[RMDB]
RNA sequence: GGGAACGACUCGAGUAGAGUCGAAAAGCCUCGGUGGAUGUCUAUAUCGCUGAAGGUGUGGACAAAUACGACCCUAUGGCCGAGUCUGGCUUAGGGGACCUAGGGAUACUGGCUAGAGUGGUGGCCGGUCCAGGAAGUUAUUCGUAACUUCCUGGACAAAAGAAACAACAACAACAAC
Reactivity to 2A3 in 0.01 (KOAc 150mM, MgCl2 10mM, bicine 150mM(pH8.5), 24C), signal-to-noise 2, nucleotides 027 to 126: g020c030c010u000c080g020g030u080g020g030a060u030g040u020c050u020a060u000a020u090c010g040c160u170g210a160a030g020g010u040g020u050g000g000a000c000a010a100a010u120a060c070g060a090c000c000c020u090a200u210g080g000c000c000g000a040g250u030c120u190g020g000c010u010u040a020g000g000g030g000a010c010c010u030a020g050g050g000a030u060a180c060u080g020g040c000u010a000g030a040g160u120g010g030u040g000g000c010c020g050
Reactivity to DMS in 0.01 (KOAc 150mM, MgCl2 10mM, bicine 150mM(pH8.5), 24C), signal-to-noise 2, nucleotides 027 to 126: g010c040c010u010c120g000g030u010g000g010a270u000g010u010c070u000a070u010a020u010c000g000c230u030g010a120a130g000g020u000g030u000g000g000a020c030a030a080a200u010a080c080g000a130c000c010c010u000a040u010g010g000c010c010g000a170g010u020c130u020g030g010c020u000u000a060g000g000g010g000a080c030c050u010a020g000g000g020a140u010a060c100u000g020g020c040u000a040g010a110g010u010g000g030u010g000g010c020c020g030
This 177-nucleotide RNA was probed chemically with 2A3 and DMS. As a SHAPE reagent, 2A3 marks flexible, mostly unpaired nucleotides at the ribose 2'-OH. For 2A3, 1,358 sequencing reads were counted. For DMS the reverse transcriptase was MarathonRT. It was measured as part of the RMDB library OK2TST. The reactions ran in a buffer of 150 mM KOAc, 10 mM MgCl2 and 150 mM bicine (pH 8.5), at 24 C.